An RNA of 207 nucleotides, treated with 2A3 and read out base by base.
RNA sequence: GGGAACGACUCGAGUAGAGUCGAAAAACGGUGCGGAAGUUCGCGCUUCCGUGAAACGCGAAAAUCGGACGGUGGCUGCAAGUCGCAUCGCAAAACCGCGGCAAGUGGAGUUAGCGAGAUGAGGCUGAAACCAUCCAACACUUCGGUGUUGGAUGAAGACUCGAAAAGGGUUCGCCCUUUUCGAGUCAAAAGAAACAACAACAACAAC
Reactivity to 2A3 in 0.01 (KOAc 150mM, MgCl2 10mM, bicine 150mM(pH8.5), 24C), signal-to-noise 1, nucleotides 027 to 156: a000c080g020g010u070g020c000g020g010a000a000g040u060u280c060g000c040g010c040u000u000c000c000g000u020g050a100a080a000c090g020c040g080a100a040a010a160u100c010g070g000a010c020g010g000u010g040g000c070u120g000c090a010a000g040u050c030g000c040a020u020c000g050c030a010a010a070a030c030c010g010c000g030g000c090a100a070g050u030g080g040a070g010u070u080a020g000c070g000a010g010a160u030g030a030g080g000c050u050g020a060a010a010c020c000a000u000c000c000a000a000c000a000c000u050u060c230g140g000u010g020u000u000g000g000a010u000g000a000a000

Reactivities are given for positions 27 through 156.